[RMDB]
RNA sequence: GGGAACGACUCGAGUAGAGUCGAAAAGAUAUGGAGGUAGGACGAUAAGCGUACUAUCGGAAACGAUAGACGCUUUUGACGUCUGUUCUCCUAAGUCAAAACACAGAUGGCUUCGGCCAUCUGUGAAGGUAACUAACAAGUUCGCUUGUUAGUUACCAAAAGAAACAACAACAACAAC
Reactivity to 2A3 in 0.01 (KOAc 150mM, MgCl2 10mM, bicine 150mM(pH8.5), 24C), signal-to-noise 4, nucleotides 027 to 126: g010a020u050a030u120g000g010a010g040g060u130a070g070g030a010c010g030a150u070a250a020g000c010g000u060a300c030u000a000u010c000g010g000a020a050a000c000g000a000u000a000g000a010c000g000c000u020u000u020u050g020a010c000g000u000c010u010g090u100u020c000u010c000c000u000a050a000g020u010c010a020a030a130a110c000a010c010a010g000a010u000g010g020c030u110u160c300g140g000c000c000a000u000c000u000g000u000g000a000a010
Reactivity to DMS in 0.01 (KOAc 150mM, MgCl2 10mM, bicine 150mM(pH8.5), 24C), signal-to-noise 9, nucleotides 027 to 126: g010a030u000a300u010g000g000a010g000g010u010a180g010g000a020c000g010a150u010a020a020g010c000g010u000a160c000u000a000u000c000g010g010a080a070a110c000g010a010u000a000g010a030c000g000c000u000u000u000u010g020a140c060g000u000c000u000g000u010u010c000u000c000c000u000a030a100g000u000c020a110a080a110a220c000a010c000a000g010a010u000g000g000c000u000u010c230g020g000c000c000a000u000c000u000g010u000g000a030a040